[RMDB]
RNA sequence: GGGAACGACUCGAGUAGAGUCGAAAAGAAAAUAAGCGCGUAAUCGCGUCUUGACGUGAGUGAGCCCACACGAAAAGCUAUCCCAAGUGGGAUAGCAUAGCUCACAAUACGCUAAGAUUCGUGUGAACCGUCACCAUCGCUUCGGCGAUGGUGACGGAAAAGAAACAACAACAACAAC
Reactivity to 2A3 in 0.01 (KOAc 150mM, MgCl2 10mM, bicine 150mM(pH8.5), 24C), signal-to-noise 1, nucleotides 027 to 126: g030a040a000a180a000u300a010a070g040c000g000c000g000u070a040a110u080c000g000c000g000u000c170u080u200g000a000c000g060u070g000a030g000u000g000a010g070c040c080c000a000c000a000c030g010a000a000a000a160g000c000u000a000u000c110c000c000a000a300g300u300g090g000g000a000u000a000g000c000a000u000a000g070c000u000c000a000c000a000a070u050a000c070g050c110u040a000a020g210a120u000u000c000g000u000g000u000g010a090a070
An RNA of 177 nucleotides, treated with 2A3 and read out base by base. The reactions ran in a buffer of 150 mM KOAc, 10 mM MgCl2 and 150 mM bicine (pH 8.5), at 24 C.